About this RNA: An RNA of 177 nucleotides, treated with 2A3 and DMS and read out base by base. The data come from the RNA Mapping Database (RMDB), library OK1LIB. Reactivities are given for positions 27 through 126. The RNA was probed in 150 mM KOAc, 10 mM MgCl2 and 150 mM bicine (pH 8.5) at 24 C. For DMS, 2,688 sequencing reads were counted. DMS adducts were read by reverse transcription with MarathonRT.

RNA sequence: GGGAACGACUCGAGUAGAGUCGAAAAUAACCUGGGUUUUGUACGCUCGCCAAAGUCGUUGCAGUAAUAUUUAAGAUCAAUUCUCUUAGAAUUGGGUGACCUGGUUUGGCUUGGAUAGUCCAUUGACGGAUUAGCAUGAGUUCGCUCAUGCUAAUCCAAAAGAAACAACAACAACAAC
Reactivity to 2A3 in 0.01 (KOAc 150mM, MgCl2 10mM, bicine 150mM(pH8.5), 24C), signal-to-noise 3, nucleotides 027 to 126: u120a010a040c000c010u010g080g010g030u010u060u110u070g050u060a010c060g010c040u030c000g080c000c010a130a050a040g080u110c030g000u040u020g000c020a030g070u100a050a110u100a080u210u280u090a130a090g060a130u100c020a030a070u040u000c080u020c040u090u140a090g040a030a060u060u000g040g030g030u060g020a020c010c040u030g010g050u020u060u070g060g000c000u020u030g010g000a040u090a090g010u020c040c020a060u020u190g040a060c170
Reactivity to DMS in 0.01 (KOAc 150mM, MgCl2 10mM, bicine 150mM(pH8.5), 24C), signal-to-noise 2, nucleotides 027 to 126: u030a100a190c010c020u000g000g010g030u000u000u010u030g010u000a090c090g020c040u000c040g000c040c030a010a060a060g030u000c140g000u010u020g000c010a070g000u000a070a010u020a040u000u010u000a030a080g070a070u010c020a020a040u050u000c130u030c100u000u070a020g000a040a010u000u010g020g050g040u030g000a050c070c010u020g020g000u000u010u000g000g000c000u000u060g000g000a070u000a080g030u000c030c020a050u030u000g000a190c140